This 177-nucleotide RNA was probed chemically with DMS and 2A3. The data come from the RNA Mapping Database (RMDB), library M2PK50. Reactivities are rounded to 0.1 and cut off at 0 and 3. The DMS profile rests on 4,963 reads. The reactions ran in a buffer of 150 mM KOAc, 10 mM MgCl2 and 150 mM bicine (pH 8.5), at 24 C. Reactivities are given for positions 27 through 126. For 2A3, 3,433 sequencing reads were counted.

RNA sequence: GGGAACGACUCGAGUAGAGUCGAAAAAGAGUUCGCUUCGGCGAACUCUACAACGCGAAAACGGCCUCCCGGAAAGAUAAGGCGGAUUCCGUCCAAGCGCCGAGAGUGGUGCGUUCGCGCACCACAAUAUUUCCCUUAGAUUCGUCUAAGGGAAAUAAAAAGAAACAACAACAACAAC
Reactivity to DMS in 0.01 (KOAc 150mM, MgCl2 10mM, bicine 150mM(pH8.5), 24C), signal-to-noise 5, nucleotides 027 to 126: a030g010a020g010u000u000c000g020c000u010u010c200g030g010c000g010a010a000c010u000c000u000a030c090a110a130c050g010c020g010a040a070a130a070c040g000g010c090c080u000c030c010c020g020g000a070a090a110g010a120u010a060a130g000g000c080g010g000a160u000u010c020c020g000u000c020c040a120a270g010c050g010c040c040g000a120g010a130g020u000g000g020u000g020c010g020u000u010c120g010c010g030c020a030c010c000a020c030a040a090
Reactivity to 2A3 in 0.01 (KOAc 150mM, MgCl2 10mM, bicine 150mM(pH8.5), 24C), signal-to-noise 2, nucleotides 027 to 126: a030g000a000g000u010u000c000g020c000u030u070c170g060g000c000g000a000a000c000u010c010u010a000c010a020a010c030g040c010g060a060a030a020a020c010g020g000c020c000u020c020c020c000g050g060a210a210a050g100a090u180a080a070g060g020c070g040g020a130u180u030c010c000g010u020c030c010a080a010g030c030g030c050c060g080a060g010a010g070u010g000g000u010g010c010g000u030u070c160g000c000g010c060a010c000c010a010c010a010a010